[RMDB]
RNA sequence: GGGAACGACUCGAGUAGAGUCGAAAAGGCGCCGAGCCGACGUGCGCUCGUUCUGCGCUGGUCAGGGUCCAGAUAUACGCCUGCUGUCCGCGUGUCCUUCACCGUCCGGAAACCUGGAAUCGGCAGACAAUGUCAUCUCGUUCGCGAGAUGACAUUGAAAAGAAACAACAACAACAAC
Reactivity to 2A3 in 0.01 (KOAc 150mM, MgCl2 10mM, bicine 150mM(pH8.5), 24C), signal-to-noise 1, nucleotides 027 to 126: g030g000c030g030c010c020g000a040g060c000c070g020a030c040g170u180g000c050g000c030u070c010g060u130u050c050u100g050c050g020c070u060g000g000u020c060a060g000g000g070u050c050c000a020g070a030u180a000u020a080c050g040c010c030u040g030c040u050g060u040c020c000g020c000g040u040g050u050c000c000u080u020c010a050c050c040g040u030c000c000g040g000a100a120a090c000c010u030g030g000a080a070u080c020g000g000c000a000g040a050
Reactivity to DMS in 0.01 (KOAc 150mM, MgCl2 10mM, bicine 150mM(pH8.5), 24C), signal-to-noise 2, nucleotides 027 to 126: g010g010c020g030c060c040g000a130g000c030c000g000a060c090g000u000g040c060g020c030u000c080g010u000u010c070u000g010c080g020c020u010g010g000u030c050a100g000g000g000u010c050c040a080g010a120u000a080u010a090c060g020c020c030u010g010c050u000g000u010c030c020g020c150g010u000g010u000c030c040u000u000c080a080c070c040g000u000c040c020g000g000a100a100a130c020c000u010g000g020a110a120u000c010g020g020c030a130g000a160